[RMDB]
RNA sequence: GGGAACGACUCGAGUAGAGUCGAAAAACGGUGCGGUUUCUUAUGGAGGGCUGAACAAGUCCGCCAUGACUUGCUGGUUUGGACUGUGAGAGUGGUGGUUGGGUGUCUCAAGUAUCCUCUGGGGGUGGCUAAUAGAUUACUUCGGUAAUCUAUUAGCAAAAGAAACAACAACAACAAC
Reactivity to DMS in 0.01 (KOAc 150mM, MgCl2 10mM, bicine 150mM(pH8.5), 24C), signal-to-noise 3, nucleotides 027 to 126: a100c060g010g010u000g000c110g010g000u010u000u000c070u010u000a040u000g000g010a040g010g020g010c020u000g000a100a100c140a130a040g010u000c000c010g000c020c020a020u010g010a080c110u010u010g010c090u000g000g010u000u000u000g010g000a060c060u000g010u000g000a080g020a140g020u010g010g010u000g000g020u000u000g000g010g010u010g010u000c050u000c050a040a090g010u010a080u000c030c020u000c070u000g000g000g010g000g020u000g000
Reactivity to 2A3 in 0.01 (KOAc 150mM, MgCl2 10mM, bicine 150mM(pH8.5), 24C), signal-to-noise 1, nucleotides 027 to 126: a000c020g050g010u070g000c050g010g060u070u130u030c070u150u200a050u050g000g020a030g000g010g000c030u030g030a030a040c100a110a000g020u000c000c000g000c000c010a030u020g030a070c030u040u120g000c010u030g020g090u050u120u070g080g020a040c020u020g010u060g080a050g010a030g090u060g040g000u030g090g000u120u110g050g050g000u050g030u000c020u010c040a050a030g020u040a080u080c010c000u050c030u040g030g010g000g040g000u030g050
About this RNA
An RNA of 177 nucleotides, treated with DMS and 2A3 and read out base by base. The RNA was probed in 150 mM KOAc, 10 mM MgCl2 and 150 mM bicine (pH 8.5) at 24 C. Source: RMDB library RFMREP, as collected in RNAgym. For 2A3 the reverse transcriptase was SuperScript II with manganese.